An RNA of 207 nucleotides, treated with 2A3 and DMS and read out base by base. The DMS profile rests on 3,708 reads. Conditions: 150 mM KOAc, 10 mM MgCl2 and 150 mM bicine (pH 8.5), 24 C. Source: RMDB library RNAMAK, as collected in RNAgym.
[RMDB]
RNA sequence: GGGAACGACUCGAGUAGAGUCGAAAACGCUGGGCGUGAAACCAGACAUGCUUCCACUGAAGCGCGCACGGUGGCGAGCAACAGCUGGUAUGUAGCGCCUGUGCUGAAGCGCGCACGGCAACCGAAAGGUGCGAAAACCCACACUUCGGUGUGGGAACUCAAUUAAAAUGUUCGCAUUUUAAUUGAGAAAAGAAACAACAACAACAAC
Reactivity to 2A3 in 0.01 (KOAc 150mM, MgCl2 10mM, bicine 150mM(pH8.5), 24C), signal-to-noise 6, nucleotides 027 to 156: c060g010c030u090g010g000g000c000g010u030g020a110a010a010c010c000a000g030a030c050a090u300g000c000u020u010c000c000a000c000u020g040a270a070g030c010g000c010g010c020a020c020g020g010u010g010g030c230g040a010g000c060a070a110c040a190g060c000u010g000g020u030a050u100g030u030a010g000c000g000c000c000u010g000u020g000c020u060g030a090a040g010c010g000c000g000c020a000c020g050g000c020a060a040c000c000g040a150a040a020g030g000u030g000c020g030a060a050a120a140c010c030c000a000c000a000c000u070u120c280g090g000u000g000u000g000g000g000a010a010
Reactivity to DMS in 0.01 (KOAc 150mM, MgCl2 10mM, bicine 150mM(pH8.5), 24C), signal-to-noise 2, nucleotides 027 to 156: c100g020c050u010g040g000g020c010g000u000g020a250a140a080c000c000a040g000a050c040a150u010g000c010u000u000c000c000a020c010u020g000a030a130g060c030g010c010g000c040a300c000g040g040u000g000g010c230g010a060g050c000a090a170c120a100g020c010u000g000g010u000a050u000g010u000a210g000c040g040c020c010u000g010u000g030c040u010g010a040a080g000c010g020c020g000c010a250c010g010g000c000a070a130c010c010g010a130a080a210g010g000u010g040c020g010a100a080a100a130c000c010c000a050c000a030c010u000u010c300g020g010u010g020u000g000g030g010a010a010